[RMDB]
RNA sequence: GGGAACGACUCGAGUAGAGUCGAAAACGGAAGCAUUAAAACCAUUCGAGCUAGUCAAUGCGUGGCGUGUCUCUCCGCAGCGUGUUGGCGAAUGUAAUGAGUGACUAAGCAUGUAGUACCGAGGAUGAUAAGAGCAAUUCGUUCGCGAAUUGCUCAACGUUAGGAGUUCCUUCGGGAACUCCUAACGAAAAGAAACAACAACAACAAC
Reactivity to 2A3 in 0.01 (KOAc 150mM, MgCl2 10mM, bicine 150mM(pH8.5), 24C), signal-to-noise 1, nucleotides 027 to 156: c050g060g010a080a020g000c030a060u030u100a050a030a030a020c100c030a090u150u110c090g030a020g110c010u050a020g070u070c000a000a000u010g020c000g000u010g070g040c000g010u090g030u060c000u030c020u050c120c040g000c030a030g010c000g000u000g060u000u000g010g070c030g000a000a000u080g050u170a020a050u100g010a030g100u030g000a000c050u050a000a080g060c060a020u030g060u140a060g020u020a030c040c000g000a060g090g030a090u070g020a010u140a270a070g010a000g000c000a000a000u000u000c000g030u040u070c210g020c000g080a000a010u000u000g000c010u000c000a000a000
Source: RMDB library M2RFPK, as collected in RNAgym. Chemical mapping of a 207-nucleotide RNA with 2A3. The 2A3 profile rests on 696 reads. Reactivities are given for positions 27 through 156.